[RMDB]
RNA sequence: GGGAACGACUCGAGUAGAGUCGAAAACGAUAGCUGUUCGCAGCUAUCGAAAGGACUACCCGUCAGGGUUAAGGCCAUACGGACAGCCGCGUCCAAUGCCGAAAAGAGGGUUGUUCGCAACCCUCAAGUCGUCUAAGAUGUUCGCAUCUUAGACGACAAAAGAAACAACAACAACAAC
Reactivity to DMS in 0.01 (KOAc 150mM, MgCl2 10mM, bicine 150mM(pH8.5), 24C), signal-to-noise 2, nucleotides 027 to 126: c000g010a000u000a010g000c000u000g000u000u030c140g020c010a000g010c000u000a010u000c000g000a050a040a150g000g000a030c040u000a060c000c000c000g010u020c300a100g020g000g000u000u000a030a090g000g000c020c030a120u010a120c070g010g020a030c040a130g000c100c010g000c220g000u000c000c000a100a050u010g000c040c000g000a230a030a140a140g010a000g020g000g030u000u020g000u010u010c200g000c010a000a010c000c000c000u000c000a010a080
Reactivity to 2A3 in 0.01 (KOAc 150mM, MgCl2 10mM, bicine 150mM(pH8.5), 24C), signal-to-noise 2, nucleotides 027 to 126: c000g010a000u000a000g030c010u030g050u090u040c270g060c080a010g000c010u000a020u000c000g000a040a010a000g030g010a020c020u020a020c010c020c000g100u180c110a110g020g000g060u050u120a160a150g010g000c000c020a050u100a150c030g030g010a020c010a010g060c040c050g020c030g050u050c010c010a020a030u100g010c000c010g070a070a080a040a040g010a000g030g020g000u000u010g010u050u030c170g000c070a000a020c030c000c000u020c000a000a010
Chemical mapping of a 177-nucleotide RNA with DMS and 2A3. 2A3 is a SHAPE reagent: it acylates the 2'-hydroxyl of flexible nucleotides of all four kinds. The reactions ran in a buffer of 150 mM KOAc, 10 mM MgCl2 and 150 mM bicine (pH 8.5), at 24 C. 2A3 adducts were read by reverse transcription with SuperScript II with manganese. The data come from the RNA Mapping Database (RMDB), library M2PK50. For DMS, 1,201 sequencing reads were counted. The 2A3 profile rests on 2,397 reads.